[RMDB]
Structure probing data (DMS and 2A3) for a 177-nucleotide construct.
Values cover nucleotides 27 to 126.
The DMS profile rests on 1,278 reads.

RNA sequence: GGGAACGACUCGAGUAGAGUCGAAAAGAUAUGGACCUGGACAUGCUGAGAGUGUCGGAAACGACAUGGUAGCAACAGCCAGUGUCCUAAGUCAAAAGUGGUACACUUCUUCGGAAGUGUACCACAACAGACGAAUCUCGUUCGCGAGAUUCGUCUGAAAAGAAACAACAACAACAAC
Reactivity to DMS in 0.01 (KOAc 150mM, MgCl2 10mM, bicine 150mM(pH8.5), 24C), signal-to-noise 2, nucleotides 027 to 126: g000a030u010a300u000g000g070a030c030c000u010g010g010a060c090a170u010g030c000u000g000a080g040a220g030u000g010u000c010g000g000a080a110a220c010g000a000c010a000u000g000g030u030a050g000c010a030a050c210a140g010c020c000a010g000u020g000u000c000c010u000a020a050g000u000c050a040a060a120a100g010u000g010g000u000a020c000a000c000u000u000c000u000u000c190g000g000a000a020g030u000g000u000a000c000c000a000c010a030a130
Reactivity to 2A3 in 0.01 (KOAc 150mM, MgCl2 10mM, bicine 150mM(pH8.5), 24C), signal-to-noise 1, nucleotides 027 to 126: g000a010u120a020u100g000g000a000c000c000u000g000g000a000c060a220u110g070c000u020g020a080g010a020g260u020g020u040c030g000g000a070a040a030c010g000a000c000a020u050g010g140u200a040g000c030a000a120c030a070g010c000c010a060g050u130g000u190c000c000u030a050a020g100u050c040a040a000a000a140g000u010g000g070u020a020c020a000c000u020u020c030u030u130c300g030g000a000a000g010u010g000u000a000c000c000a000c010a000a000